Background
Structure probing data (2A3 and DMS) for a 177-nucleotide construct.

RNA sequence: GGGAACGACUCGAGUAGAGUCGAAAAGGUAAAUCUGAAGGAAGUCGGCGGCAAACCUUUGAGUUCUGAGGAACACGAAGUCACAUGAGGCUUAAUUUACUGGGUAAGCUAGCCUAACGAAGCAGAGCCUUUUACGAGCGUUCGCGCUCGUAAAAGGAAAAGAAACAACAACAACAAC
Reactivity to 2A3 in 0.01 (KOAc 150mM, MgCl2 10mM, bicine 150mM(pH8.5), 24C), signal-to-noise 2, nucleotides 027 to 126: g000g000u060a010a000a100u010c000u000g000a080a000g070g000a020a000g040u050c030g020g000c000g000g000c020a030a060a070c010c000u030u020u090g120a080g070u030u000c050u070g210a250g000g080a040a000c040a010c120g100a020a020g040u040c040a050c040a280u200g140a130g040g000c000u000u000a000a020u080u140u010a030c040u150g030g030g030u050a060a030g020c020u150a140g010c030c000u040a120a030c020g040a000a000g050c030a000g000a000g000
Reactivity to DMS in 0.01 (KOAc 150mM, MgCl2 10mM, bicine 150mM(pH8.5), 24C), signal-to-noise 2, nucleotides 027 to 126: g000g010u000a040a030a100u000c050u010g000a000a120g000g000a060a240g050u030c300g010g000c120g000g080c070a080a110a110c190c040u000u000u060g000a070g080u000u000c090u010g000a110g000g000a010a010c000a150c140g040a080a000g000u000c070a030c220a000u050g000a110g000g000c040u020u010a000a020u010u010u000a170c240u010g020g000g000u000a020a300g020c080u000a080g070c000c030u010a090a010c110g030a090a100g030c000a000g000a040g000